[RMDB]
RNA sequence: GGGAACGACUCGAGUAGAGUCGAAAAGCUUGCUGCCAAAGGAACCGCAUCGCCGCCAAUCUCGCACUUGCACAAACUUAUAUUGCACUGCAGUAUGGGUCGGGGCGGGAAUGCGAGCCGGGUUCGGGAAGUACAGCUUAUUCGUAAGCUGUACUUCAAAAGAAACAACAACAACAAC
Reactivity to 2A3 in 0.01 (KOAc 150mM, MgCl2 10mM, bicine 150mM(pH8.5), 24C), signal-to-noise 9, nucleotides 027 to 126: g030c040u070u130g000c030u050g020c010c010a060a080a060g110g010a060a040c030c010g030c060a060u080c040g020c030c000g020c020c010a030a080u010c010u000c020g000c010a130c060u040u100g010c070a020c050a090a110a010c030u070u030a020u020a020u080u050g000c110a130c300u240g000c000a010g020u030a030u030g030g030g040u070c100g040g000g010g030c030g010g000g000a030a030u130g010c030g030a030g000c010c020g020g000g000u030u080c000g040g050
Reactivity to DMS in 0.01 (KOAc 150mM, MgCl2 10mM, bicine 150mM(pH8.5), 24C), signal-to-noise 7, nucleotides 027 to 126: g000c060u000u010g020c020u000g000c000c030a060a130a090g010g010a070a090c020c030g010c070a090u020c090g010c020c060g000c080c200a060a120u010c030u010c020g010c020a080c040u000u010g030c150a060c130a110a060a050c070u020u010a030u010a030u000u000g010c020a130c200u030g000c000a010g000u010a020u000g000g010g000u010c170g000g000g010g010c070g010g000g000a070a050u010g020c060g000a050g010c120c080g000g000g000u000u010c080g000g010